[RMDB]
RNA sequence: GGGAACGACUCGAGUAGAGUCGAAAAACAUCACAAGCGGUGCAGAGCUCAUCAUCGAGCCCUGCGCAGGCCUGGGCAGGCUCACAGCCCUGUGUGCAUAUCAGAACCGCACACCGCUGUGUGUCUCGCACGUAUCGCUGUUCGCAGCGAUACGUGCAAAAGAAACAACAACAACAAC
Reactivity to DMS in 0.01 (KOAc 150mM, MgCl2 10mM, bicine 150mM(pH8.5), 24C), signal-to-noise 1, nucleotides 027 to 126: a090c050a100u010c020a080c010a090a100g020c010g010g000u000g000c000a000g000a040g010c000u000c010a090u030c300a220u030c260g000a040g000c000c010c000u000g010c000g010c000a070g020g010c120c000u010g000g000g040c070a090g000g020c050u020c020a010c000a010g020c190c010c070u000g010u020g020u000g000c020a140u000a100u020c230a070g000a110a160c300c090g000c000a020c000a000c000c300g020c020u000g000u000g030u000g000u020c010u000c070
Reactivity to 2A3 in 0.01 (KOAc 150mM, MgCl2 10mM, bicine 150mM(pH8.5), 24C), signal-to-noise 1, nucleotides 027 to 126: a000c030a010u170c030a010c040a180a060g000c010g010g000u020g000c000a000g010a020g020c000u000c010a090u010c010a090u170c110g000a000g030c000c000c000u000g010c000g030c020a000g000g000c000c020u060g000g040g020c030a080g100g100c030u040c030a090c010a020g010c030c050c010u040g020u010g000u000g000c020a010u040a090u270c050a030g060a170a060c080c050g030c000a000c010a000c000c000g030c000u010g010u000g000u010g000u050c000u000c050